[RMDB]
RNA sequence: GGGAACGACUCGAGUAGAGUCGAAAAGGGGUCGAACCGUUUGACGACGAUGACAUGAUACUGUCACUGAAGCCUCCACGGUGACAAUCUAUCAACAGCAUCGUCCGAGGUUCGACGGAGGCACCCAAACGGGGAUAAUGUUCGCAUUAUCCCCGAACGAUUGAACGAACUUCGGUUCGUUCAAUCGAAAAGAAACAACAACAACAAC
Reactivity to 2A3 in 0.01 (KOAc 150mM, MgCl2 10mM, bicine 150mM(pH8.5), 24C), signal-to-noise 1, nucleotides 027 to 156: g090g020g070g030u020c000g000a010a010c020c020g010u060u190u270g080a050c040g010a000c010g000a000u010g030a050c150a300u210g030a040u040a100c070u040g000u010c000a000c000u020g000a130a000g010c000c000u000c010c000a040c020g030g040u010g000a000c000a000a020u090c080u120a090u090c100a120a200c070a100g010c000a000u000c000g000u000c020c000g020a040g000g000u010u000c000g000a000c000g000g000a000g000g020c000a030c000c000c020a000a140a030c020g000g000g000g000a000u000a030a000u010g070u130u070c250g000c100a000u000u010a000u020c000c030c000c000g000a000a000